[RMDB]
RNA sequence: GGGAACGACUCGAGUAGAGUCGAAAACUCGUACAUCGCCACCAUCACCUCGGUCGGCCAGGAACUGCUGGGCCGCGCCAAGGGCGGGUACGUGACGCUGGCCUUGCAGUUCGGCCUGCUGCUGCUGCACCUCAGCUUGGUUCGCCAAGCUGAGGUGAAAAGAAACAACAACAACAAC
Reactivity to DMS in 0.01 (KOAc 150mM, MgCl2 10mM, bicine 150mM(pH8.5), 24C), signal-to-noise 1, nucleotides 027 to 126: c030u000c030g030u020a030c090a070u000c040g040c020c000a060c030c050a050u030c060a060c080c030u010c060g010g030u000c260g020g040c030c000a150g040g030a010a020c030u000g000c010u000g000g000g000c000c030g000c040g010c030c020a220a080g000g000g030c050g030g010g010u000a050c090g010u020g000a050c000g020c010u010g060g000c000c010u000u000g010c020a020g010u000u000c000g010g010c010c010u020g000c050u000g010c070u000g010c070u000g020
Reactivity to 2A3 in 0.01 (KOAc 150mM, MgCl2 10mM, bicine 150mM(pH8.5), 24C), signal-to-noise 1, nucleotides 027 to 126: c010u000c000g050u080a020c010a130u050c040g000c030c010a020c000c010a060u090c030a030c000c010u050c030g000g050u000c000g010g000c000c000a090g120g000a020a020c000u010g020c000u020g000g020g000c000c000g000c000g000c000c010a060a080g040g030g020c080g030g010g060u090a050c060g010u040g030a000c040g000c080u180g000g000c000c000u020u010g000c000a000g000u010u000c000g000g000c000c010u000g000c000u030g020c010u020g020c040u090g040